Chemical mapping of a 177-nucleotide RNA with DMS and 2A3. The reactions ran in a buffer of 150 mM KOAc, 10 mM MgCl2 and 150 mM bicine (pH 8.5), at 24 C. Source: RMDB library OK2TST, as collected in RNAgym.

RNA sequence: GGGAACGACUCGAGUAGAGUCGAAAAAAACUGGAUGGACCUUUGAGAACUAAGCUACAGGUAUACCUCCUCAGGAAACAUCUGGAUUGCAUGGUGCGAAUUGCUUCUCAGCCAUUCAACUUAAUCAGCAUAAUAAUGCGUUCGCGCAUUAUUAUGCAAAAGAAACAACAACAACAAC
Reactivity to DMS in 0.01 (KOAc 150mM, MgCl2 10mM, bicine 150mM(pH8.5), 24C), signal-to-noise 3, nucleotides 027 to 126: a090a040a070c130u000g000g010a010u020g020g000a110c110c090u030u000u000g010a030g000a060a050c060u010a080a140g000c050u000a160c040a030g000g030u000a090u000a150c050c020u000c060c060u000c170a020g000g010a110a090a090c090a050u000c040u020g000g010a090u000u000g000c010a050u020g000g000u010g010c040g000a080a060u010u010g010c110u000u000c030u010c010a140g010c040c020a010u000u010c040a020a100c120u000u010a020a080u000c170a130
Reactivity to 2A3 in 0.01 (KOAc 150mM, MgCl2 10mM, bicine 150mM(pH8.5), 24C), signal-to-noise 2, nucleotides 027 to 126: a000a000a010c040u020g010g000a000u020g020g020a070c040c000u140u090u150g030a020g020a020a030c050u050a090a030g000c000u060a060c010a030g020g050u030a050u050a060c000c010u050c010c040u040c070a010g000g060a040a080a080c020a050u020c020u020g050g040a160u040u180g020c060a040u100g100g000u070g040c040g040a120a150u140u090g040c040u080u020c010u000c020a020g000c000c000a000u000u060c000a020a010c010u040u090a050a050u140c040a040